[RMDB]
RNA sequence: GGGAACGACUCGAGUAGAGUCGAAAAUUAGUCAUGGUCCAGACUGAUGCCGGCCCUGCCCUGGGGAUUUACUGGUCAGGCCAAUCGGUGUGGCUUCAGGGGUUGGAGGGAGUCCAGCUGUUCAUCAUAAAAGACUAGAUUUCGAUCUAGUCUUUUAAAAAGAAACAACAACAACAAC
Reactivity to 2A3 in 0.01 (KOAc 150mM, MgCl2 10mM, bicine 150mM(pH8.5), 24C), signal-to-noise 1, nucleotides 027 to 126: u140u070a020g020u050c060a020u090g040g000u070c000c000a000g010a060c020u010g010a020u020g060c110c090g080g010c090c050c040u010g000c040c000c000u010g100g000g030g010a040u070u120u250a150c070u050g020g030u040c040a000g050g000c010c010a020a050u060c060g020g000u100g010u010g070g050c080u090u060c050a000g010g100g000g030u100u100g040g000a120g020g000g030a000g070u000c000c000a020g000c000u040g030u140u090c040a070u030c010a030
Reactivity to DMS in 0.01 (KOAc 150mM, MgCl2 10mM, bicine 150mM(pH8.5), 24C), signal-to-noise 8, nucleotides 027 to 126: u010u010a050g010u010c060a120u000g010g000u000c020c020a090g000a040c010u000g010a020u000g010c200c110g010g000c090c030c050u000g000c080c010c020u000g000g000g020g010a170u010u010u010a070c050u000g000g000u000c040a060g010g010c020c020a090a030u000c040g020g020u000g010u000g010g000c070u000u000c050a050g000g000g000g000u010u010g000g000a120g000g000g000a120g010u010c060c070a070g010c080u000g000u010u000c060a070u000c110a160
An RNA of 177 nucleotides, treated with 2A3 and DMS and read out base by base.
Values are in units of 0.01, from 0 to 300, in steps of 10.
The RNA was probed in 150 mM KOAc, 10 mM MgCl2 and 150 mM bicine (pH 8.5) at 24 C.
For 2A3 the reverse transcriptase was SuperScript II with manganese.